[RMDB]
RNA sequence: GGGAACGACUCGAGUAGAGUCGAAAAGGCACGGUAUCCACCCACACCGGAAGGGGCGCACUCUCGAGCACGGUGUCCUUCUCACCGUAUGUCGCCGAGGCCACGAGCUCGUAUCGCCCGUCGGGCAGUCAUGAUAGCCGUUCGCGGCUAUCAUGACAAAAGAAACAACAACAACAAC
Reactivity to 2A3 in 0.01 (KOAc 150mM, MgCl2 10mM, bicine 150mM(pH8.5), 24C), signal-to-noise 1, nucleotides 027 to 126: g050g020c040a000c170g060g000u070a110u030c020c010a020c000c000c000a030c010a030c020c000g020g060a070a050g100g000g020g010c030g010c030a040c040u100c010u010c010g030a040g000c010a000c040g100g000u000g020u070c010c000u260u130c050u020c030a070c040c000g050u120a090u210g140u120c030g050c100c030g060a090g050g000c020c010a060c060g020a010g010c000u000c030g010u070a070u250c020g010c000c000c030g040u060c010g000g010g040c030a010
Reactivity to DMS in 0.01 (KOAc 150mM, MgCl2 10mM, bicine 150mM(pH8.5), 24C), signal-to-noise 2, nucleotides 027 to 126: g020g010c060a040c020g010g010u020a090u000c020c090a130c030c020c040a070c100a070c040c010g000g020a110a050g000g000g010g030c040g000c150a120c110u000c070u000c040g000a060g010c050a090c030g010g000u000g020u000c060c020u010u040c050u000c070a060c070c050g000u000a020u010g020u000c100g020c040c080g010a120g020g020c030c020a090c050g020a090g010c010u000c050g010u000a100u000c070g000c020c000c000g010u000c020g010g000g000c090a170
Structure probing data (2A3 and DMS) for a 177-nucleotide construct.
For DMS the reverse transcriptase was MarathonRT.
Conditions: 150 mM KOAc, 10 mM MgCl2 and 150 mM bicine (pH 8.5), 24 C.
2A3 adducts were read by reverse transcription with SuperScript II with manganese.
Source: RMDB library OK2TRN, as collected in RNAgym.